An RNA of 177 nucleotides, treated with DMS and 2A3 and read out base by base. DMS adducts were read by reverse transcription with MarathonRT. The DMS profile rests on 4,994 reads. 2A3 adducts were read by reverse transcription with SuperScript II with manganese. Source: RMDB library OK2TST, as collected in RNAgym. The reactions ran in a buffer of 150 mM KOAc, 10 mM MgCl2 and 150 mM bicine (pH 8.5), at 24 C. Values cover nucleotides 27 to 126.
[RMDB]
RNA sequence: GGGAACGACUCGAGUAGAGUCGAAAAUCAUGCGUUAUUAGCGCAUGCGACGGAAAAACGUAUGGUCUUGAAUAUUGGUGGGAUUGCUAAUUUAUCCGUCCUACUACCUGAUUCGCCUAUUCGGGGAGUGAUGCGUAAAUUUCGAUUUACGCAUCACAAAAGAAACAACAACAACAAC
Reactivity to DMS in 0.01 (KOAc 150mM, MgCl2 10mM, bicine 150mM(pH8.5), 24C), signal-to-noise 4, nucleotides 027 to 126: u000c020a000u000g010c000g020u000u010a130u010u010a110g020c010g010c040a060u010g010c200g020a080c070g000g000a040a050a060a050a060c070g000u000a050u000g010g000u000c040u000u000g010a080a080u010a130u010u000g010g030u010g010g020g000a050u000u000g010c130u010a060a100u000u000u000a080u010c050c030g000u000c010c040u000a060c060u000a080c150c070u010g000a120u000u000c030g010c040c030u000a060u010u010c010g000g010g000g010a160
Reactivity to 2A3 in 0.01 (KOAc 150mM, MgCl2 10mM, bicine 150mM(pH8.5), 24C), signal-to-noise 4, nucleotides 027 to 126: u040c000a010u010g000c010g010u050u090a160u140u160a110g030c020g000c050a060u100g060c050g030a060c030g050g070a070a050a050a020a000c030g020u020a040u080g040g000u020c030u060u150g080a170a060u110a090u190u150g060g000u030g020g000g020a020u050u100g020c020u050a090a130u080u090u130a070u060c020c000g000u010c010c000u020a030c000u020a040c010c010u040g030a110u030u030c030g000c010c000u040a090u020u040c020g010g010g000g010a070